RNA sequence: GGGAACGACUCGAGUAGAGUCGAAAACAUCAGGAGCACCUUCCGCGCACUUCCAAGCAGGAGCUUUCCUUCCAAGCGCACUUCCAAUCUACUCGAGAGGAGGAGGAGGAGGAGGAUUCCCACAAAAACCUUUAAAAGAGUUCGCUCUUUUAAAGGUAAAAGAAACAACAACAACAAC
Reactivity to DMS in 0.01 (KOAc 150mM, MgCl2 10mM, bicine 150mM(pH8.5), 24C), signal-to-noise 4, nucleotides 027 to 126: c100a060u010c060a100g010g000a090g040c060a060c060c040u000u000c050c030g020c090g000c040a100c050u000u010c030c080a130a140g000c070a090g000g000a070g010c070u000u000u000c010c010u010u010c050c040a050a120g000c050g010c050a070c050u010u000c010c030a110a190u000c000u010a040c050u000c030g000a020g010a300g000g000a060g010g020a080g010g000a090g000g000a110g000g000a050g000g000a130u010u000c000c010c000a110c210a060a050a060a090
Reactivity to 2A3 in 0.01 (KOAc 150mM, MgCl2 10mM, bicine 150mM(pH8.5), 24C), signal-to-noise 3, nucleotides 027 to 126: c020a050u150c090a040g090g000a000g020c020a040c040c020u070u020c040c060g030c020g010c020a030c030u090u050c030c020a100a040g050c030a050g050g060a020g030c010u060u080u050c010c000u120u060c040c020a070a020g060c020g010c040a020c030u030u000c000c000a030a060u010c000u060a090c050u070c090g050a030g000a030g040g040a040g010g030a040g000g050a040g000g000a040g020g010a010g010g000a020u030u000c020c020c010a010c030a020a080a020a020